[RMDB]
RNA sequence: GGGAACGACUCGAGUAGAGUCGAAAAGAGUAUAGCUUCGGCUAUACUCAAAACACUACAUGCAGCGCUCUAGGUGUGUAGUGACAGUAAGGGCGCAAAUAAAAACGACAGGGUUCGCCCUGUCGAAGUAACACAACUAGUUCGCUAGUUGUGUUACAAAAGAAACAACAACAACAAC
Reactivity to DMS in 0.01 (KOAc 150mM, MgCl2 10mM, bicine 150mM(pH8.5), 24C), signal-to-noise 3, nucleotides 027 to 126: g000a030g000u000a000u000a000g010c010u000u020c240g030g010c000u000a010u000a000c000u010c000a020a060a090a170c010a010c020u000a000c010a010u000g000c000a120g000c010g000c010u000c010u000a030g010g030u000g000u000g010u000a010g000u000g000a060c170a090g010u000a150a090g010g000g000c010g020c010a120a090a070u000a080a030a080a160a130c010g000a010c000a000g000g010g020u010u010c300g000c000c000c000u000g010u000c000g000a000a030
Reactivity to 2A3 in 0.01 (KOAc 150mM, MgCl2 10mM, bicine 150mM(pH8.5), 24C), signal-to-noise 4, nucleotides 027 to 126: g000a000g000u010a000u000a010g010c010u040u060c270g040g000c000u000a000u000a010c000u000c000a000a000a000a000c000a000c000u010a000c000a010u010g020c010a010g010c000g010c020u020c030u090a040g010g020u000g010u000g000u020a010g000u010g120a100c050a030g100u140a070a080g010g010g020c000g000c010a010a080a010u060a010a040a010a000a010c000g010a000c000a010g050g010g010u080u090c180g120c020c000c000u000g000u000c000g000a000a000